[RMDB]
RNA sequence: GGGAACGACUCGAGUAGAGUCGAAAAAGGCCGAGCGCCGCGCCGCUGCCGCCAAGGCCAGGCCGGAAGCCGGCCAGGCCCCGCGCGAAGAAGAGGAAGAAGAGAAGCCGUCGCGCUGAGGACAGCGCCGACGUCCUCGUUUCGACGAGGACGUCGGAAAAGAAACAACAACAACAAC
Reactivity to 2A3 in 0.01 (KOAc 150mM, MgCl2 10mM, bicine 150mM(pH8.5), 24C), signal-to-noise 1, nucleotides 027 to 126: a000g050g000c010c010g110a120g070c020g060c000c000g010c070g010c050c020g030c050u030g040c000c010g020c000c110a140a000g000g000c000c060a000g000g000c060c000g000g070a190a030g060c040c010g010g000c000c000a000g000g000c000c040c000c000g050c020g000c010g010a070a050g070a040a040g030a050g110g000a010a050g020a160a000g110a070g070a120a010g020c040c030g000u050c050g000c020g020c030u060g050a090g030g000a050c010a050g000c040g020
Reactivity to DMS in 0.01 (KOAc 150mM, MgCl2 10mM, bicine 150mM(pH8.5), 24C), signal-to-noise 1, nucleotides 027 to 126: a040g000g030c020c000g040a120g070c120g030c110c020g030c180g050c080c000g000c160u060g030c030c010g020c110c130a040a200g030g040c000c200a000g030g000c020c000g010g000a110a060g000c040c000g000g060c000c040a010g020g000c040c000c000c030g000c030g000c070g000a050a060g080a080a070g000a020g030g000a170a070g000a150a190g000a070g000a130a080g000c000c050g010u000c070g000c000g060c020u000g030a060g030g020a200c170a050g020c000g030

Chemical mapping of a 177-nucleotide RNA with 2A3 and DMS.
2A3 is a SHAPE reagent: it acylates the 2'-hydroxyl of flexible nucleotides of all four kinds.
The data come from the RNA Mapping Database (RMDB), library RFM100.
For 2A3, 890 sequencing reads were counted.